[RMDB]
RNA sequence: GGGAACGACUCGAGUAGAGUCGAAAACCACCGCAAUUCGUUGCGGUGGGAAGGUGCAUUUCGCUGUCUGCACCACAGACGGCCAAUCCGUCAAAGCGAAAACUGGAGGGUCAUUCGUGACCCUCAACCUCUGGUAUGAAUUCGUUCAUACCAGAGGAAAAGAAACAACAACAACAAC
Reactivity to 2A3 in 0.01 (KOAc 150mM, MgCl2 10mM, bicine 150mM(pH8.5), 24C), signal-to-noise 8, nucleotides 027 to 126: c000c000a000c000c000g000c000a010a030u070u060c210g070u130u010g010c000g010g000u010g000g000g000a060a100g000g000u020g010c030a080u040u070u050c020g000c020u020g080u100c060u040g010c000a000c000c010a010c010a020g010a000c000g010g000c080c090a060a080u110c010c000g000u000c020a020a030a000g020c010g020a010a010a020a080c130u170g120g000a010g000g000g010u000c010a020u050u100c160g100u030g000a000c000c010c000u000c000a000a000
Reactivity to DMS in 0.01 (KOAc 150mM, MgCl2 10mM, bicine 150mM(pH8.5), 24C), signal-to-noise 5, nucleotides 027 to 126: c000c000a010c010c000g010c000a010a030u000u020c180g030u000u000g020c010g020g020u010g000g000g010a050a030g000g020u010g000c020a090u010u000u000c020g020c010u000g010u000c060u000g010c010a050c020c030a080c080a170g010a020c010g020g000c170c280a110a120u000c000c000g010u000c010a030a300a040g020c010g020a030a020a120a070c210u000g010g010a020g000g000g000u000c010a050u000u010c170g010u000g010a010c000c000c000u000c000a020a040
Conditions: 150 mM KOAc, 10 mM MgCl2 and 150 mM bicine (pH 8.5), 24 C.
An RNA of 177 nucleotides, treated with 2A3 and DMS and read out base by base.
It was measured as part of the RMDB library M2PK50.